[RMDB]
RNA sequence: GGGAACGACUCGAGUAGAGUCGAAAAAGAAUCCCGAUGGCCGAAAGAGCAAGGGUUCCUCGGCAAUGCUUAUCAGCCGAGGGUUAGCCGAUCCUAAGGCCCGUCGUAAUUCGAGCGGGUCAAAAGGUAGGAUCAAAGUGUUCGCACUUUGAUCCUAAAAAGAAACAACAACAACAAC
Reactivity to DMS in 0.01 (KOAc 150mM, MgCl2 10mM, bicine 150mM(pH8.5), 24C), signal-to-noise 3, nucleotides 027 to 126: a120g050a180a110u000c000c030c000g020a180u030g020g070c000c030g010a100a080a140g030a060g010c050a070a090g000g030g010u000u020c000c000u000c000g000g000c020a080a100u030g020c160u030u020a110u060c140a090g010c010c000g000a030g000g000g010u020u050a110g000c030c010g000a090u040c000c000u010a210a190g010g000c040c000c010g030u000c000g020u020a160a130u080u050c020g000a070g020c000g020g000g000u010c010a010a020a090a060g000g030
Reactivity to 2A3 in 0.01 (KOAc 150mM, MgCl2 10mM, bicine 150mM(pH8.5), 24C), signal-to-noise 3, nucleotides 027 to 126: a000g050a010a070u030c000c000c030g000a140u120g120g000c010c010g100a090a020a000g210a040g030c050a060a030g050g010g000u090u020c020c030u000c000g010g010c040a080a020u120g030c130u200u300a170u300c060a020g170c000c000g000a000g000g000g010u000u030a000g010c000c000g000a090u070c000c000u010a030a100g000g000c000c000c000g000u000c000g040u090a090a210u170u190c000g020a020g060c000g000g000g020u000c040a190a120a000a000g020g000
An RNA of 177 nucleotides, treated with DMS and 2A3 and read out base by base. The 2A3 profile rests on 1,398 reads. The RNA was probed in 150 mM KOAc, 10 mM MgCl2 and 150 mM bicine (pH 8.5) at 24 C. Source: RMDB library RFM100, as collected in RNAgym.